[RMDB]
Conditions: 150 mM KOAc, 10 mM MgCl2 and 150 mM bicine (pH 8.5), 24 C. The record gives the reactivity of an RNA of 177 nucleotides to DMS and 2A3.
RNA sequence: GGGAACGACUCGAGUAGAGUCGAAAAUAGUGAUACUUCGUCGCAAUGGCCAGCUGGUGGAACAGGACGGCGUGGUGGUGCGAAGGAACAUCAGCGAAAACGGCGAUACGGUGGAGACCUUCAAAAACGUAAAUAAUUUAUUCGUAAAUUAUUUACGAAAAGAAACAACAACAACAAC
Reactivity to DMS in 0.01 (KOAc 150mM, MgCl2 10mM, bicine 150mM(pH8.5), 24C), signal-to-noise 6, nucleotides 027 to 126: u020a100g000u010g010a110u020a070c060u020u000c020g010u000c030g020c080a070a060u010g000g020c030c030a140g010c020u000g010g010u020g010g010a110a110c110a080g010g020a120c080g000g020c040g030u000g000g010u010g020g000u000g000c050g010a080a070g010g010a110a090c040a020u000c030a040g010c030g000a050a080a140a150c140g000g000c030g000a060u010a110c070g000g010u010g000g000a070g000a100c060c020u000u000c090a040a060a080a080a100
Reactivity to 2A3 in 0.01 (KOAc 150mM, MgCl2 10mM, bicine 150mM(pH8.5), 24C), signal-to-noise 9, nucleotides 027 to 126: u190a020g100u070g060a040u040a140c030u030u030c020g030u010c010g020c080a080a120u090g120g000c010c010a010g020c030u030g010g040u040g030g050a080a060c030a060g060g100a070c030g020g020c060g020u090g020g050u100g030g030u100g040c030g030a050a020g020g010a010a020c020a030u030c010a000g030c010g070a070a040a010a060c030g030g000c010g020a030u030a100c020g020g010u020g010g000a020g020a030c010c000u020u070c070a070a060a020a020a030